[RMDB]
RNA sequence: GGGAACGACUCGAGUAGAGUCGAAAACUCACUACGUUCGCGUAGUGAGAAAAAAGCGUACUACCAGAAAGACAUCGAUCUAUAGAGAACUCCCAAAUAGGAGACUAUAGGGAGUCUAACUGGUAUCGCAAAAAAACCAGCUAUUCGUAGCUGGUAAACAUCAGUACACUUUCGAGUGUACUGAUGUAAAAGAAACAACAACAACAAC
Reactivity to 2A3 in 0.01 (KOAc 150mM, MgCl2 10mM, bicine 150mM(pH8.5), 24C), signal-to-noise 2, nucleotides 027 to 156: c000u030c000a000c000u010a010c000g060u040u080c200g010c040g110u040a040g000u000g000a020g000a020a040a000a000a030a010g060c030g020u140a110c060u010a000c040c000a000g020a010a140a000g000a040c010a150u260c120g060a040u040c020u010a020u020a040g090a020g110a220a100c010u050c040c050c040a140a290a100u210a120g000g020a000g100a210c000u000a000u020a010g000g000g000a020g000u040c000u000a040a030c000u000g000g000u000a020u060c000g000c000a110a230a000a000a000a000a000c000c000a000g000c000u010a010u040u120c240g190u060a010g000c000u000g010g000u010a050a040
Reactivity to DMS in 0.01 (KOAc 150mM, MgCl2 10mM, bicine 150mM(pH8.5), 24C), signal-to-noise 2, nucleotides 027 to 156: c000u000c010a010c020u000a050c000g000u000u000c300g090c030g090u000a000g060u000g000a000g000a000a030a040a130a120a050g020c000g010u020a090c150u000a050c010c000a040g010a080a300a050g000a040c050a260u030c120g020a070u010c000u010a060u000a060g010a140g020a140a220c010u000c000c030c010a010a220a220u000a090g000g000a030g060a260c010u000a000u000a030g000g020g000a050g050u020c010u000a030a300c010u010g000g020u000a040u000c020g000c000a010a000a070a040a040a090a120c000c000a000g000c000u000a070u010u010c180g020u000a030g010c000u010g000g000u000a000a040
Annotation:
Chemical mapping of a 207-nucleotide RNA with 2A3 and DMS. The reactions ran in a buffer of 150 mM KOAc, 10 mM MgCl2 and 150 mM bicine (pH 8.5), at 24 C. For DMS the reverse transcriptase was MarathonRT. It was measured as part of the RMDB library RNAMAK.